Conditions: 150 mM KOAc, 10 mM MgCl2 and 150 mM bicine (pH 8.5), 24 C. The record gives the reactivity of an RNA of 177 nucleotides to DMS and 2A3. It was measured as part of the RMDB library OK1LIB.
[RMDB]
RNA sequence: GGGAACGACUCGAGUAGAGUCGAAAAUCCACUCAGGAUAGCCGGAACGGUAUGUCGCCGCGGUACACACGCGGUACACGCCCUUCGGAUAUUCCGCGUCCUGAUGGAAAUGGUACAUCCGCGCGCGAUAUGACUAGUGCUUCGGCACUAGUCAUAUAAAAGAAACAACAACAACAAC
Reactivity to DMS in 0.01 (KOAc 150mM, MgCl2 10mM, bicine 150mM(pH8.5), 24C), signal-to-noise 3, nucleotides 027 to 126: u010c000c000a070c240u010c210a090g020g000a030u000a090g000c060c010g000g000a030a040c300g010g000u000a140u010g060u000c180g020c010c000g000c000g030g000u030a190c300a090c250a170c000g010c050g000g000u000a000c000a100c060g000c010c000c040u040u030c060g000g010a000u010a050u000u000c000c020g000c010g010u000c200c020u000g020a000u010g000g000a030a110a080u010g000g000u030a160c020a040u000c040c040g000c300g000c020g000c000g020
Reactivity to 2A3 in 0.01 (KOAc 150mM, MgCl2 10mM, bicine 150mM(pH8.5), 24C), signal-to-noise 4, nucleotides 027 to 126: u000c000c000a070c090u090c030a000g000g000a020u030a060g040c060c040g000g000a070a040c040g030g000u020a050u170g030u050c090g010c030c000g000c020g000g100u300a070c040a010c020a020c070g010c010g000g010u000a010c000a020c040g040c000c000c000u110u140c040g030g000a030u060a070u130u000c000c000g000c000g000u010c000c000u020g000a050u020g000g060a080a070a070u160g080g000u080a040c020a090u020c000c010g010c010g020c020g000c010g060
Overview: For 2A3 the reverse transcriptase was SuperScript II with manganese. High 2A3 reactivity points to a flexible backbone, as in loops and unpaired stretches.